[RMDB]
RNA sequence: GGGAACGACUCGAGUAGAGUCGAAAACUGACCUGUGUGGAAGUACGUGAGUACUUCACGCUCUACGGGAGUAGAGCCACACAGAUCGUGGAGCGAUGUCUUGGAACUACUCCCGUAGUUCACGUAUGACUCACGUCAUACCAAGACGUCAGCCACGCGAUUAUUAAUCAUUCGUGAUUAAUAAUCGAAAAGAAACAACAACAACAAC
Reactivity to DMS in 0.01 (KOAc 150mM, MgCl2 10mM, bicine 150mM(pH8.5), 24C), signal-to-noise 4, nucleotides 027 to 156: c020u000g020a010c020c010u010g060u000g040u010g020g010a080a110g010u010a020c010g030u000g010a250g020u000a050c090u000u000c070a070c090g010c050u000c010u000a010c000g020g030g020a220g000u000a010g000a120g020c000c010a010c010a030c000a050g010a020u000c030g010u010g010g010a200g020c050g000a040u000g040u000c010u010u000g040g010a070a140c000u000a030c010u010c070c130c090g020u000a010g010u000u000c030a120c110g000u000a060u000g000a090c010u000c110a100c120g000u010c030a080u000a110c040c040a050a060g020a020c020g030u000c010a050g020c000c020a070c070g000
Reactivity to 2A3 in 0.01 (KOAc 150mM, MgCl2 10mM, bicine 150mM(pH8.5), 24C), signal-to-noise 9, nucleotides 027 to 156: c010u010g010a010c000c010u010g000u000g000u010g030g010a040a030g020u110a020c010g020u030g030a020g020u110a180c020u100u100c040a040c060g050c020u010c000u000a000c000g030g000g000a020g000u000a000g000a010g020c000c000a000c000a000c000a000g010a010u010c020g020u120g120g100a150g100c030g010a010u010g000u000c000u010u000g010g010a050a070c000u000a000c000u020c020c030c020g000u000a000g000u050u100c120a110c100g080u110a040u110g020a010c000u010c050a020c030g010u000c000a000u020a060c000c000a000a010g000a010c010g000u000c000a000g000c000c000a040c030g060